[RMDB]
RNA sequence: GGGAACGACUCGAGUAGAGUCGAAAAGGGUUGCUGAGUGAAUAUAUCGAACAGUCAGGUUAACAGGCUGCGGCAUUUUGUCCGCGCCGGGCUUCGCUCACUGUUCAGGCCGGAGCCACAGACCGCCAGGCAACGCUUAAUUCGUUAAGCGUUGCCUAAAAGAAACAACAACAACAAC
Reactivity to DMS in 0.01 (KOAc 150mM, MgCl2 10mM, bicine 150mM(pH8.5), 24C), signal-to-noise 1, nucleotides 027 to 126: g010g010g010u010u000g060c030u040g000a130g030u010g020a120a080u010a160u000a160u010c140g030a040a040c040a060g000u000c190a050g010g000u000u000a060a170c100a130g010g010c020u000g060c030g010g010c040a170u000u000u020u020g010u030c030c010g010c040g080c010c040g010g040g010c090u000u000c080g000c050u010c180a030c060u020g030u000u010c020a080g000g020c080c050g030g000a110g010c000c040a100c140a110g020a070c060c040g020c090c110
Notes: The data come from the RNA Mapping Database (RMDB), library OK2TRN. This 177-nucleotide RNA was probed chemically with DMS. Reactivities are given for positions 27 through 126.